About this RNA
Chemical mapping of a 177-nucleotide RNA with DMS and 2A3. Values cover nucleotides 27 to 126. For 2A3 the reverse transcriptase was SuperScript II with manganese.
RNA sequence: GGGAACGACUCGAGUAGAGUCGAAAAAGUCAGGACCUAACGCGUACCCAAACGGGGAAGUGGAUGGACAACAGGUUAAUAUUCCUGUACUACCUUAUACUGCGAUGGAGGGACGGAGAAGUGAAAGAACAUCACCUCCAUUCGUGGAGGUGAUGUUAAAAGAAACAACAACAACAAC
Reactivity to DMS in 0.01 (KOAc 150mM, MgCl2 10mM, bicine 150mM(pH8.5), 24C), signal-to-noise 3, nucleotides 027 to 126: a060g020u010c050a070g020g010a090c040c010u020a060a150c110g020c040g010u010a200c040c010c010a080a170a160c160g020g040g000g020a100a170g000u010g000g000a150u030g000g000a030c130a040a110c100a040g020g000u010u000a080a130u020a230u030u000c000c010u010g000u030a070c080u000a060c030c050u010u010a120u030a060c070u000g000c020g000a030u010g020g000a100g000g010g000a060c060g010g000a050g000a060a110g010u010g000a060a100a130g000
Reactivity to 2A3 in 0.01 (KOAc 150mM, MgCl2 10mM, bicine 150mM(pH8.5), 24C), signal-to-noise 1, nucleotides 027 to 126: a000g120u000c000a000g040g030a070c000c000u030a090a070c030g000c030g020u040a060c010c020c000a090a200a030c140g000g000g000g070a030a000g030u030g010g010a060u180g030g010a000c040a020a040c070a050g030g000u010u110a190a020u030a100u120u210c010c000u030g000u020a050c000u010a000c000c050u100u060a010u010a060c060u040g040c020g100a090u010g070g090a020g010g070g000a000c070g070g050a030g010a170a000g040u200g050a030a030a130g030